[RMDB]
RNA sequence: GGGAACGACUCGAGUAGAGUCGAAAAUGCAAAAGUGCAGAAAGAGAGAGCUGUUAAAUCAGCAAGCGGCCAGACAACCGUCGGGAUAGAUCCACAGGUGAAGCGGAUUGAUUCCUCUGCUUUCAGCAAUUCGUGGUCAUUUCGAUGACCACGAAUUAAAAGAAACAACAACAACAAC
Reactivity to DMS in 0.01 (KOAc 150mM, MgCl2 10mM, bicine 150mM(pH8.5), 24C), signal-to-noise 3, nucleotides 027 to 126: u020g000c090a130a050a080a110g000u030g010c000a010g000a020a050a030g000a050g000a090g000a080g000c020u020g000u010u010a010a060a070u020c010a010g020c000a090a100g010c020g020g000c010c040a150g000a130c210a090a100c030c060g010u010c100g000g000g000a040u030a110g010a020u010c030c030a050c050a080g010g020u010g060a090a080g000c100g010g000a040u010u020g000a210u040u000c000c010u010c050u000g010c050u000u010u000c050a100g020c180
Reactivity to 2A3 in 0.01 (KOAc 150mM, MgCl2 10mM, bicine 150mM(pH8.5), 24C), signal-to-noise 4, nucleotides 027 to 126: u110g010c020a060a000a060a070g080u070g010c000a000g050a050a070a000g060a000g020a020g030a020g020c020u010g010u120u130a060a100a180u090c010a010g020c030a020a020g040c020g000g020c020c020a060g050a110c050a080a040c020c020g060u070c070g030g030g000a010u010a040g020a020u000c010c000a030c030a030g100g220u180g130a060a010g040c010g000g020a010u030u030g070a060u050u040c000c000u000c020u020g040c000u070u070u020c040a040g000c010
Chemical mapping of a 177-nucleotide RNA with DMS and 2A3. 2A3 adducts were read by reverse transcription with SuperScript II with manganese. The 2A3 profile rests on 2,427 reads. Conditions: 150 mM KOAc, 10 mM MgCl2 and 150 mM bicine (pH 8.5), 24 C.